This 177-nucleotide RNA was probed chemically with 2A3 and DMS.
2A3 adducts were read by reverse transcription with SuperScript II with manganese.
For DMS the reverse transcriptase was MarathonRT.
The reactions ran in a buffer of 150 mM KOAc, 10 mM MgCl2 and 150 mM bicine (pH 8.5), at 24 C.
Values cover nucleotides 27 to 126.
RNA sequence: GGGAACGACUCGAGUAGAGUCGAAAAGAUAUGGAACAUAUCAAGCAACAGCCACAAGGUCGGAAACGACCUCGUGGACAUGCUUAUAUGUUCCUAAGUCAAAUCAUAAGCGUUCGCGCUUAUGAAAUCCUGGAACUAUGUUCGCAUAGUUCCAGGAAAAAGAAACAACAACAACAAC
Reactivity to 2A3 in 0.01 (KOAc 150mM, MgCl2 10mM, bicine 150mM(pH8.5), 24C), signal-to-noise 1, nucleotides 027 to 126: g000a000u010a000u050g010g000a000a000c000a000u020a020u110c240a130a000g000c060a110a140c110a280g000c000c010a000c010a000a000g030g010u000c000g000g000a020a000a000c000g000a010c000c010u000c020g010u020g000g000a000c010a170u300g000c010u000u030a000u000a000u020g000u000u000c020c000u000a000a000g010u010c030a070a050a220u050c000a000u010a000a030g000c010g070u070u210c300g030c000g000c100u010u000a000u020g020a050a020a020
Reactivity to DMS in 0.01 (KOAc 150mM, MgCl2 10mM, bicine 150mM(pH8.5), 24C), signal-to-noise 2, nucleotides 027 to 126: g040a020u000a010u010g000g000a030a020c000a000u000a020u010c300a020a000g000c000a170a140c250a190g010c010c000a010c000a010a010g000g020u000c000g000g010a000a010a020c000g000a010c010c000u000c040g000u000g000g030a020c070a120u000g020c000u000u000a020u000a000u000g010u000u000c000c000u000a000a070g000u020c000a130a100a180u010c000a000u000a000a000g000c000g060u000u040c260g030c010g010c010u010u000a000u000g010a020a130a060